[RMDB]
RNA sequence: GGGAACGACUCGAGUAGAGUCGAAAAGAAGGAUGCCCAGAAGGUACCCGCAGGUAACAAGAGACACUGUGGAUCUGAUCUGGGGCCAACUACCUCUAUCAGGUGAGUUAGUUAAAAAACGUCUAGUGACAAUGUCAUAGUUCGCUAUGACAUUGUCAAAAGAAACAACAACAACAAC
Reactivity to 2A3 in 0.01 (KOAc 150mM, MgCl2 10mM, bicine 150mM(pH8.5), 24C), signal-to-noise 1, nucleotides 027 to 126: g110a060a070g020g020a000u060g300c040c000c000a000g000a020a000g040g000u010a070c000c000c010g000c000a000g000g030u090a000a010c030a110a250g000a000g010a030c020a010c010u000g020u010g000g000a000u000c000u010g140a250u010c000u000g020g000g000g000c010c000a000a000c000u010a030c000c000u000c000u050a140u150c140a090g270g200u080g060a020g010u010u020a010g040u070u080a060a110a010a010a060a110c060g070u030c040u030a080g060u030
Reactivity to DMS in 0.01 (KOAc 150mM, MgCl2 10mM, bicine 150mM(pH8.5), 24C), signal-to-noise 2, nucleotides 027 to 126: g020a110a150g010g020a060u000g010c000c000c000a020g030a050a300g000g000u000a040c110c000c020g040c010a000g000g000u000a020a020c000a170a070g000a120g000a210c300a000c010u000g000u000g000g020a010u000c020u000g000a160u010c020u000g000g000g000g000c010c020a000a070c020u010a060c020c000u000c090u010a120u020c120a060g010g010u000g000a050g000u000u000a000g000u010u010a000a030a050a070a060a090c240g010u000c020u000a020g020u000
Record summary:
An RNA of 177 nucleotides, treated with 2A3 and DMS and read out base by base. The data come from the RNA Mapping Database (RMDB), library RFMREP.